[RMDB]
RNA sequence: GGGAACGACUCGAGUAGAGUCGAAAACGCGGGCCGGCUACUCUUCUUUCCCUUCUCUCGUCUUCCUCGGUCAACCUCCGGAGUUCCUCUUCCUCCUCCUUGCUGAGUGACUUUCCUCCCGCGCUCAAACGUAGUGUCUUCGGACACUACAAAAGAAACAACAACAACAAC
Reactivity to DMS in 0.01 (KOAc 150mM, MgCl2 10mM, bicine 150mM(pH8.5), 24C), signal-to-noise 9, nucleotides 027 to 129: c080g010c060g030g000g020c100c030g000g000c040u030a070c070u000c020u020u000c040u040u030u030c010c020c020u010u010c040u000c030u000c060g010u010c040u040u020c010c010u000c030g030g020u020c080a090a160c060c010u000c020c020g020g040a080g020u000u000c020c020u030c040u010u010c040c010u010c030c020u010c030c010u010u010g020c060u000g020a060g020u030g030a120c070u000u010u000c030c020u000c020c010c040g040c110g020c070u040c060a070a080a100c160
Reactivity to 2A3 in 0.01 (KOAc 150mM, MgCl2 10mM, bicine 150mM(pH8.5), 24C), signal-to-noise 9, nucleotides 027 to 129: c060g000c010g010g010g010c000c030g020g010c010u070a070c020u030c000u090u030c000u030u060u050c010c010c010u070u030c040u010c010u010c010g060u010c020u080u040c020c000u020c020g020g010u050c040a060a070c010c010u030c010c010g030g010a050g020u030u030c000c000u020c000u030u020c000c010u010c000c000u020c000c000u030u040g010c020u020g020a040g030u060g070a110c010u040u040u030c000c000u010c000c010c000g030c000g010c020u050c040a110a100a040c090
An RNA of 170 nucleotides, treated with DMS and 2A3 and read out base by base. For DMS the reverse transcriptase was MarathonRT. 2A3 adducts were read by reverse transcription with SuperScript II with manganese.